The data come from the RNA Mapping Database (RMDB), library RNAMAK.
This 207-nucleotide RNA was probed chemically with 2A3 and DMS.
The 2A3 profile rests on 14,349 reads.
Reactivities are given for positions 27 through 156.
The RNA was probed in 150 mM KOAc, 10 mM MgCl2 and 150 mM bicine (pH 8.5) at 24 C.
[RMDB]
RNA sequence: GGGAACGACUCGAGUAGAGUCGAAAAUCCUAAGUCACUUUGAUACCAGAGGUGGGAGGGAGCGUAUCGGAAACGAUACGCGUUGAUCUCCCACUCCCCACCUGGUGCAAAGUGAUAUGGAAAAAGUUAGGUCUACAAGUUCGCUUGUAGACCUAACCAGAAUAAUCUUGUUCGCAAGAUUAUUCUGAAAAGAAACAACAACAACAAC
Reactivity to 2A3 in 0.01 (KOAc 150mM, MgCl2 10mM, bicine 150mM(pH8.5), 24C), signal-to-noise 4, nucleotides 027 to 156: u030c010c000u030a120a030g020u000c000a000c010u010u030u010g080a140u210a100c000c000a010g000a010g010g000u000g000g000g000a010g000g000g000a020g010c010g000u000a000u000c000g010g060a170a040a040c000g000a000u060a070c000g000c040g000u050u010g000a000u000c000u000c080c000c000a000c000u000c010c000c000c000a050c000c000u000g000g000u000g000c000a000a000a000g000u000g000a000u010a050u050g040g030a050a100a040a010a010g000u000u000a000g000g000u000c000u000a000c000a010a000g010u020u110c180g120c160u000u000g000u000a000g000a000c000c000u000a000a000c000
Reactivity to DMS in 0.01 (KOAc 150mM, MgCl2 10mM, bicine 150mM(pH8.5), 24C), signal-to-noise 3, nucleotides 027 to 156: u000c000c000u000a050a240g010u000c000a010c010u000u010u020g010a160u000a040c000c010a070g020a300g030g020u000g000g010g000a020g000g050g000a090g010c000g030u000a000u000c000g010g010a230a130a250c000g010a010u010a000c000g050c000g010u000u010g020a060u000c010u000c000c000c000a000c000u000c090c070c040c040a300c140c050u000g000g000u000g030c000a010a010a020g020u010g010a000u000a120u010g010g000a060a060a100a080a120g000u000u000a010g010g010u000c000u000a010c000a030a030g020u000u000c300g030c000u000u000g020u000a010g000a010c000c000u000a000a000c000